Chemical mapping of a 177-nucleotide RNA with DMS and 2A3. The 2A3 profile rests on 1,026 reads. 2A3 adducts were read by reverse transcription with SuperScript II with manganese.
RNA sequence: GGGAACGACUCGAGUAGAGUCGAAAACAGGUCCCUCCCUGGCAAGCUGCUUCCCAUCAGACCAAAGCAGGCACUUUGGAGCAGAGGACAGAGGACUCCCUGAGGGACCUGCGGGUGUAGUGGGAGGAACACUUAGCUCGUUCGCGAGCUAAGUGUUAAAAGAAACAACAACAACAAC
Reactivity to DMS in 0.01 (KOAc 150mM, MgCl2 10mM, bicine 150mM(pH8.5), 24C), signal-to-noise 2, nucleotides 027 to 126: c070a060g000g000u000c010c000c000u000c010c120c040u010g030g020c080a110a110g000c010u010g000c030u010u000c000c010c030a090u000c200a130g010a160c010c030a090a050a180g000c060a090g020g020c170a070c000u010u000u000g010g000a090g010c080a050g000a130g010g010a090c080a070g000a110g020g010a140c070u000c020c010c020u000g010a040g060g020g000a040c030c000u000g010c060g020g000g010u000g000u010a070g010u000g000g000g000a110g030g010
Reactivity to 2A3 in 0.01 (KOAc 150mM, MgCl2 10mM, bicine 150mM(pH8.5), 24C), signal-to-noise 1, nucleotides 027 to 126: c000a020g000g090u050c000c020c010u050c000c040c080u000g020g000c080a060a050g060c000u030g000c010u110u070c050c000c000a060u060c060a050g100a050c020c000a060a100a100g060c040a150g090g020c070a040c110u030u040u110g020g000a070g020c060a020g020a110g040g090a000c020a020g220a080g050g060a100c060u050c030c000c020u050g030a010g010g020g000a030c000c050u010g000c010g040g020g070u140g020u090a030g010u050g010g000g000a100g030g090